[RMDB]
RNA sequence: GGGAACGACUCGAGUAGAGUCGAAAAAGCAAUCCACAAGCCGCAGAAACGCUUGACCUCUUCGCCACCUAUCUGGGGCGGCUUGCGGGCGACCUUGCGCUCAUUUUCAUGGCGCAUAGCGGCGUUAGCCGCAGGGUGGAUUCGUCCACCCUGCGGCAAAAGAAACAACAACAACAAC
Reactivity to 2A3 in 0.01 (KOAc 150mM, MgCl2 10mM, bicine 150mM(pH8.5), 24C), signal-to-noise 3, nucleotides 027 to 126: a020g080c040a030a080u080c010c020a050c010a050a020g010c010c000g030c030a020g150a070a110a010c030g030c040u070u070g100a280c010c030u050c050u120u080c020g030c010c040a300c050c050u220a160u280c120u150g000g040g080g000c030g000g000c010u020u030g030c010g000g000g040c010g050a080c020c020u010u020g010c000g010c030u300c260a080u110u160u150u160c140a040u100g010g000c000g000c000a010u030a000g010c000g000g000c010g040u090u130a030
Reactivity to DMS in 0.01 (KOAc 150mM, MgCl2 10mM, bicine 150mM(pH8.5), 24C), signal-to-noise 3, nucleotides 027 to 126: a050g030c090a100a140u000c030c030a090c050a080a120g000c010c000g050c010a170g000a100a100a160c150g010c010u000u000g010a150c110c020u000c010u010u010c130g010c010c020a090c030c060u000a120u010c250u020g010g000g000g000c020g010g000c050u010u000g020c100g000g000g000c030g000a100c050c060u000u000g010c000g020c010u020c040a040u020u010u000u010c210a130u000g000g000c000g010c000a040u000a050g000c020g020g010c010g010u010u010a060